[RMDB]
RNA sequence: GGGAACGACUCGAGUAGAGUCGAAAAUUAAAUGGAUUUUUGGAAUUAGGAGUUGGAAUAGGAGCUUGCUCCGUCCACUCCACGCAUCGACCUGGUAUUGCAGUACUUCCAGGAACGGUGCACCCCCCGCACCCAGCCUUUUCGAAGGCUGGGUGCGAAAAGAAACAACAACAACAAC
Reactivity to 2A3 in 0.01 (KOAc 150mM, MgCl2 10mM, bicine 150mM(pH8.5), 24C), signal-to-noise 1, nucleotides 027 to 126: u000u000a010a000a260u260g040g020a080u000u000u130u000u000g220g000a270a270u280u040a220g000g000a000g000u260u160g000g020a080a300u040a300g000g000a000g000c000u000u180g040c000u080c000c000g000u060c000c000a000c000u020c000c000a020c040g000c000a100u060c000g000a000c000c000u030g110g230u200a300u240u280g020c060a000g000u000a120c260u030u000c000c000a000g060g000a160a000c000g000g000u000g020c000a000c000c000c000c000c000